[RMDB]
RNA sequence: GGGAACGACUCGAGUAGAGUCGAAAAAGGGAGCUUCAAGACUGGGGUGAACAUUCUAUUGUCAUCCUUGUGGGACUGUGACCUCCAGGGUAGGGUGUCCCCACACAGAGUGGGAGCCAGUGCUCAGCUAGUUAUGCCGAUUCGUCGGCAUAACUAGAAAAGAAACAACAACAACAAC
Reactivity to 2A3 in 0.01 (KOAc 150mM, MgCl2 10mM, bicine 150mM(pH8.5), 24C), signal-to-noise 2, nucleotides 027 to 126: a020g050g000g010a030g040c070u100u080c050a040a040g070a070c010u010g010g020g000g010u000g020a070a020c000a060u290u070c130u300a150u050u250g070u060c010a010u000c040c020u060u030g010u060g060g050g020a040c120u070g080u080g110a060c010c010u050c030c050a030g030g020g040u050a060g000g000g060u020g050u060c000c000c000c000a000c000a000c010a020g300a040g070u030g010g040g020a010g010c010c030a060g020u030g090c010u000c030a040g000
Reactivity to DMS in 0.01 (KOAc 150mM, MgCl2 10mM, bicine 150mM(pH8.5), 24C), signal-to-noise 3, nucleotides 027 to 126: a030g000g000g000a150g020c060u000u020c090a090a100g010a120c030u010g000g000g010g000u000g000a060a040c000a060u010u020c170u010a100u000u010g010u010c030a030u010c050c010u000u020g020u010g000g020g010a050c110u000g030u000g000a180c230c020u010c050c030a090g000g000g010u010a050g000g000g020u000g000u010c190c010c010c020a010c010a080c170a150g010a210g000u000g000g020g000a130g010c020c040a040g000u000g000c020u000c020a170g000